[RMDB]
RNA sequence: GGGAACGACUCGAGUAGAGUCGAAAAAGAGCCUUUAACACGUAUAGAAAUUAUGCAAGAGGCUAAGAAGUUACACCGUAUUAGCCUGAGUCUUUUAGUCGUAGGUGUUGGCUUUGCAGCUUUAGGACGCUACCUAGUGAUUCGUCACUAGGUAGCGAAAAGAAACAACAACAACAAC
Reactivity to DMS in 0.01 (KOAc 150mM, MgCl2 10mM, bicine 150mM(pH8.5), 24C), signal-to-noise 3, nucleotides 027 to 126: a060g010a050g020c000c010u000u010u010a070a090c060a050c060g020u010a050u000a300g010a060a080a060u030u010a010u000g010c050a130a170g000a010g010g010c010u000a060a050g000a170a070g020u010u010a050c150a150c100c000g000u010a130u010u000a030g010c070c020u000g000a210g000u000c120u030u000u010u000a060g000u000c040g030u010a050g000g010u010g010u000u010g000g000c000u020u010u000g020c290a100g020c060u000u000u000a090g060g030a270
Reactivity to 2A3 in 0.01 (KOAc 150mM, MgCl2 10mM, bicine 150mM(pH8.5), 24C), signal-to-noise 2, nucleotides 027 to 126: a000g060a010g010c030c000u130u070u110a130a000c030a030c100g080u030a020u030a100g120a060a190a040u140u060a020u080g060c050a040a100g040a010g270g020c000u010a000a020g060a060a000g030u110u240a060c070a040c060c030g030u130a060u020u040a020g000c000c000u020g020a040g090u160c080u000u150u060u080a090g040u050c050g010u020a030g010g070u010g020u030u080g010g030c000u070u010u050g060c020a040g050c000u120u070u110a050g080g000a020